The record gives the reactivity of an RNA of 177 nucleotides to DMS and 2A3. The 2A3 profile rests on 3,113 reads. For DMS the reverse transcriptase was MarathonRT. The data come from the RNA Mapping Database (RMDB), library TTRDES.

[RMDB]
RNA sequence: GGGAACGACUCGAGUAGAGUCGAAAAGAUAUGGAUAGUUCAUGGGAGUGUUGGAUCGGAAACGAUCCAAGACACGAGGAUCAUGGCUAUCCUAAGUCAAACACAGACAAGUUCGCUUGUCUGUGAAUCUCCCCACUAUGUUCGCAUAGUGGGGAGAAAAAGAAACAACAACAACAAC
Reactivity to DMS in 0.01 (KOAc 150mM, MgCl2 10mM, bicine 150mM(pH8.5), 24C), signal-to-noise 1, nucleotides 027 to 126: g000a030u000a000u030g000g000a010u000a000g000u010u010c000a000u000g010g030g010a100g050u010g000u000u010g000g000a010u000c010g000g000a010a000a030c010g010a000u000c000c000a000a040g010a200c020a070c090g010a190g030g000a040u020c010a000u000g000g020c000u000a010u000c000c000u000a010a050g000u020c000a160a110a210c010a010c010a010g000a020c000a010a000g010u000u010c300g020c000u000u000g000u000c000u000g030u010g000a050a100
Reactivity to 2A3 in 0.01 (KOAc 150mM, MgCl2 10mM, bicine 150mM(pH8.5), 24C), signal-to-noise 2, nucleotides 027 to 126: g000a010u020a000u050g000g010a000u000a040g050u300u300c010a020u010g030g000g100a200g030u030g010u040u020g000g000a020u000c000g000g000a000a010a000c010g000a010u010c050c000a000a010g090a030c010a010c030g120a290g180g010a050u020c000a030u020g020g000c000u000a020u060c000c000u000a010a000g000u010c010a030a140a050c000a000c010a000g030a000c000a020a000g020u040u130c250g100c260u010u010g020u000c010u010g000u000g000a010a020